[RMDB]
RNA sequence: GGGAACGACUCGAGUAGAGUCGAAAAGAUAUGGACAUGCAUGCAAGUGAUAUCGGAAACGAUAUAUGAUGACCAUGUCAUGUCCUAAGUCAAAACAUCGCCCUUCUGUUCGCAGAAGGGCGAUGAACAAAGGAUCGGUGUUCGCACCGAUCCUUUGAAAAGAAACAACAACAACAAC
Reactivity to DMS in 0.01 (KOAc 150mM, MgCl2 10mM, bicine 150mM(pH8.5), 24C), signal-to-noise 2, nucleotides 027 to 126: g010a030u000a300u010g000g000a010c000a000u000g000c020a020u000g000c030a020a260g000u000g010a030u000a000u000c000g020g000a070a140a100c020g000a010u000a020u000a040u000g000a020u010g010a300c300c000a010u000g000u000c000a020u010g000u000c000c010u000a020a070g000u000c050a110a060a160a210c010a000u020c030g000c020c000c000u000u000c020u000g000u000u000c130g000c020a010g000a010a000g000g000g010c000g000a000u000g010a070a080
Reactivity to 2A3 in 0.01 (KOAc 150mM, MgCl2 10mM, bicine 150mM(pH8.5), 24C), signal-to-noise 1, nucleotides 027 to 126: g040a030u050a090u150g020g000a000c000a000u000g000c000a010u040g030c060a100a170g150u120g200a020u000a000u010c000g010g000a080a050a050c030g040a000u020a000u020a030u090g230a170u110g010a050c080c000a020u020g160u290c020a010u010g040u060c010c000u000a080a000g060u010c040a000a000a080a180c020a000u010c000g020c010c020c060u040u000c000u020g020u060u090c270g050c050a030g090a000a010g020g020g040c010g000a010u010g000a000a020
The data come from the RNA Mapping Database (RMDB), library TTRDEL. Chemical mapping of a 177-nucleotide RNA with DMS and 2A3. The RNA was probed in 150 mM KOAc, 10 mM MgCl2 and 150 mM bicine (pH 8.5) at 24 C. The DMS profile rests on 1,185 reads. For 2A3, 1,403 sequencing reads were counted.